Chemical mapping of a 177-nucleotide RNA with DMS and 2A3. Conditions: 150 mM KOAc, 10 mM MgCl2 and 150 mM bicine (pH 8.5), 24 C. Values cover nucleotides 27 to 126.
RNA sequence: GGGAACGACUCGAGUAGAGUCGAAAAGAUUGCCCAAGCUUGGGGAAAUGGAACCAAUCCUGUAAUCCCAACCAGGACGAUGUAGCGAUUUUGGUCUCAAAGCCCACAUCUCAUUUGGGAGAGGAGACCUAUUAGCCCUAUUCGUAGGGCUAAUAGGAAAAGAAACAACAACAACAAC
Reactivity to DMS in 0.01 (KOAc 150mM, MgCl2 10mM, bicine 150mM(pH8.5), 24C), signal-to-noise 9, nucleotides 027 to 126: g010a140u000u000g010c010c010c010a090a160g010c210u000u000g020g000g010g000a060a100a110u000g010g010a070a140c100c080a080a110u000c010c010u000g000u000a110a140u010c010c000c000a070a110c280c060a070g010g010a050c100g020a060u010g010u000a070g030c090g000a090u010u000u000u000g010g000u000c040u000c030a030a060a130g000c010c000c010a060c170a080u000c050u010c080a170u000u010u000g010g000g010a080g010a120g010g000a040g010a080
Reactivity to 2A3 in 0.01 (KOAc 150mM, MgCl2 10mM, bicine 150mM(pH8.5), 24C), signal-to-noise 5, nucleotides 027 to 126: g040a070u080u140g090c000c000c010a000a030g100c090u130u100g020g010g020g050a060a180a140u110g050g020a020a050c040c020a030a110u000c000c000u020g040u100a050a120u040c020c000c000a010a010c030c030a020g050g000a010c060g010a040u100g060u160a030g050c040g080a060u050u040u050u200g050g020u030c040u000c050a060a070a060g030c000c020c000a040c020a060u060c050u030c080a150u080u090u110g050g000g010a070g000a020g050g030a030g010a020